[RMDB]
RNA sequence: GGGAACGACUCGAGUAGAGUCGAAAACGUCUGCAAAGCGUCUACACAAGACCAUCGUUUUCGUCACGCACGACAUCGACGAGGCGUUCAAACUCGGUGAGGUGGUGGCGGUGUUCGCGCCGGGCGGCGUCAGCCCCACUUUCGAGUGGGGCUGACGAAAAGAAACAACAACAACAAC
Reactivity to DMS in 0.01 (KOAc 150mM, MgCl2 10mM, bicine 150mM(pH8.5), 24C), signal-to-noise 1, nucleotides 027 to 126: c100g050u010c130u070g040c110a020a210a030g060c020g100u000c020u000a060c200a120c080a050a220g000a100c020c080a070u010c030g000u000u000u000u000c050g000u000c040a060c120g010c140a020c050g000a130c060a040u000c000g000a020c040g000a160g020g000c100g000u010u000c020a050a090a060c180u000c000g010g010u000g000a220g000g000u040g040g020u000g000g030c030g020g000u020g020u000u020c120g000c010g050c020c110g030g060g000c030g000g010
Reactivity to 2A3 in 0.01 (KOAc 150mM, MgCl2 10mM, bicine 150mM(pH8.5), 24C), signal-to-noise 3, nucleotides 027 to 126: c000g020u010c020u090g040c080a090a070a080g030c040g040u000c050u140a060c120a020c030a050a070g080a080c010c010a070u040c070g040u040u030u090u040c020g000u010c010a050c160g090c050a030c010g120a050c040a080u080c040g110a100c000g030a020g050g050c070g060u100u060c050a040a040a060c050u030c010g060g010u070g050a100g060g060u090g010g030u040g010g030c040g030g020u040g020u060u060c040g000c000g000c050c040g060g010g020c040g010g000
This 177-nucleotide RNA was probed chemically with DMS and 2A3.
For DMS the reverse transcriptase was MarathonRT.
As a SHAPE reagent, 2A3 marks flexible, mostly unpaired nucleotides at the ribose 2'-OH.
Conditions: 150 mM KOAc, 10 mM MgCl2 and 150 mM bicine (pH 8.5), 24 C.